Overview
The record gives the reactivity of an RNA of 177 nucleotides to DMS and 2A3. For DMS the reverse transcriptase was MarathonRT. For 2A3 the reverse transcriptase was SuperScript II with manganese. Values cover nucleotides 27 to 126. The 2A3 profile rests on 1,079 reads. The DMS profile rests on 1,077 reads.
RNA sequence: GGGAACGACUCGAGUAGAGUCGAAAAGCGAACACCAGCCCCACUGCGAAAAAGCGGAAAAUAUCGGUUUGCGUGAGAUGAAUAUUAUCGUCUGACACAGGGACAUGUUCGGGUCGAACACGCAAAGCCAUGGCUCGGUGUUCGCACCGAGCCAUGGAAAAGAAACAACAACAACAAC
Reactivity to DMS in 0.01 (KOAc 150mM, MgCl2 10mM, bicine 150mM(pH8.5), 24C), signal-to-noise 1, nucleotides 027 to 126: g000c000g040a020a080c000a010c010c050a140g000c010c000c160c020a230c090u030g000c010g000a090a200a150a210a050g000c030g000g000a090a040a030a000u190a020u000c070g010g000u000u000u000g010c000g000u040g000a030g000a000u000g000a040a000u000a060u000u170a070u000c020g000u000c050u050g110a120c000a090c150a080g000g000g000a010c090a140u020g020u000u010c000g000g050g030u010c000g000a070a010c000a040c000g020c000a080a020a110g000
Reactivity to 2A3 in 0.01 (KOAc 150mM, MgCl2 10mM, bicine 150mM(pH8.5), 24C), signal-to-noise 2, nucleotides 027 to 126: g040c010g010a020a000c070a020c000c000a010g020c000c000c000c050a090c010u090g000c010g180a130a130a000a040a040g010c050g000g060a080a000a090a000u220a150u120c040g030g010u000u000u030g000c020g010u030g040a050g020a060u130g030a070a200u090a140u210u120a060u130c020g050u010c030u080g070a030c010a010c000a130g210g020g090a050c030a090u040g070u080u050c030g070g010g000u060c030g030a060a040c020a000c000g010c000a000a000a060g030